[RMDB]
RNA sequence: GGGAACGACUCGAGUAGAGUCGAAAAUACUUGCUUCUUCUAGUCUUAGAACCUUUGUUGUAGAUAAGUCUUUGUCAAUUGAGGAGUUUGCUGACGUAGUAAAGGAACAAGUCUCAGACUUGCUUGUACUUACAGGUAGGUUCGCCUACCUGUAAGUAAAAGAAACAACAACAACAAC
Reactivity to DMS in 0.01 (KOAc 150mM, MgCl2 10mM, bicine 150mM(pH8.5), 24C), signal-to-noise 2, nucleotides 027 to 126: u010a080c020u000u000g000c040u000u000c000u010u010c010u000a050g000u000c030u000u010a200g000a060a070c030c040u000u020u000g010u020u010g000u000a090g020a060u000a050a100g030u010c090u000u010u000g000u000c050a040a050u000u000g040a060g020g000a100g010u000u010u000g000c140u020g010a030c060g000u000a030g010u000a050a000a030g020g000a040a070c010a010a020g010u000c040u000c130a180g010a100c150u000u000g010c050u000u000g000u000
Reactivity to 2A3 in 0.01 (KOAc 150mM, MgCl2 10mM, bicine 150mM(pH8.5), 24C), signal-to-noise 1, nucleotides 027 to 126: u050a020c020u020u050g010c000u020u040c010u090u000c010u010a000g020u060c020u030u080a070g010a090a070c010c020u010u020u010g030u030u020g020u050a030g010a090u030a050a170g090u010c080u020u080u070g070u020c010a040a130u030u040g010a070g010g010a110g020u030u010u070g000c030u050g010a020c070g030u000a020g000u000a020a050a050g070g030a020a020c010a020a020g000u000c020u020c000a060g030a040c000u030u080g030c010u030u060g030u010